[RMDB]
RNA sequence: GGGAACGACUCGAGUAGAGUCGAAAAACAAGGUGUGUUUCGCCGUUCCGCUUCGCUGUUGCUUGUGGUCAUUAGCCGGACUACUGUCUAGCGCCAGUUUACCCGGGUUACCCAAAGCUUGCAAAAAGUGGAGGGCUACCCUGGGCAUUUUGGCCCACGUUGAAUAAUUCUUCGGAAUUAUUCAACGAAAAGAAACAACAACAACAAC
Reactivity to 2A3 in 0.01 (KOAc 150mM, MgCl2 10mM, bicine 150mM(pH8.5), 24C), signal-to-noise 3, nucleotides 027 to 156: a010c110a100a070g020g030u050g000u010g020u020u010u060c010g000c020c020g030u100u030c050c020g020c060u100u100c060g010c030u060g070u290u110g030c040u060u150g040u070g000g030u010c030a120u060u140a060g060c080c040g060g010a010c030u090a030c020u190g050u090c070u070a040g020c020g010c050c010a040g000u050u070u080a060c010c000c000g000g030g000u010u030a010c000c000c000a000a020a000g020c000u030u050g040c080a230a220a000a030a040g020u030g010g010a010g010g020g000c020u010a010c010c000c000u020g000g010g000c010a030u120u120u060u080g060g010c010c020c000a060
Reactivity to DMS in 0.01 (KOAc 150mM, MgCl2 10mM, bicine 150mM(pH8.5), 24C), signal-to-noise 1, nucleotides 027 to 156: a110c060a120a070g010g020u020g020u000g070u000u010u020c000g030c000c010g020u010u000c010c020g000c110u030u000c040g050c030u030g040u000u000g010c030u000u000g010u000g030g000u010c060a110u000u000a160g000c020c050g050g020a080c050u010a040c160u010g020u020c110u010a100g010c110g010c080c010a110g000u000u010u000a020c030c000c000g000g040g010u010u000a060c000c010c000a040a300a300g000c020u000u000g020c260a090a090a100a070a030g020u000g000g020a300g000g000g010c020u010a000c050c000c000u000g100g030g080c000a010u000u000u050u000g010g020c020c020c020a130